[RMDB]
RNA sequence: GGGAACGACUCGAGUAGAGUCGAAAAAGGCAGCUUCCCGGCUUUUAAGCUACGGACGAUGCAAACGUAGCAGGCAUCGAAUUUUCGGCCCUUCGAAAAGCUGAGUUGAGCUCAGCAAGGGAAUCAACCGGAGAGAGUAAUUCGUUACUCUCUCCGGAAAAGAAACAACAACAACAAC
Reactivity to DMS in 0.01 (KOAc 150mM, MgCl2 10mM, bicine 150mM(pH8.5), 24C), signal-to-noise 1, nucleotides 027 to 126: a100g020g000c030a030g000c100u000u000c020c010c000g010g000c040u010u000u000u010a060a150g010c010u000a010c020g020g050a080c100g000a080u000g010c090a060a100a150c020g020u000a010g000c000a110g000g000c000a070u000c080g000a140a080u000u000u000u000c040g020g020c030c000c020u000u040c090g000a080a040a190a140g000c010u000g000a010g010u000u000g010a150g010c050u000c000a030g020c000a070a050g000g010g000a050a030u000c130a130a230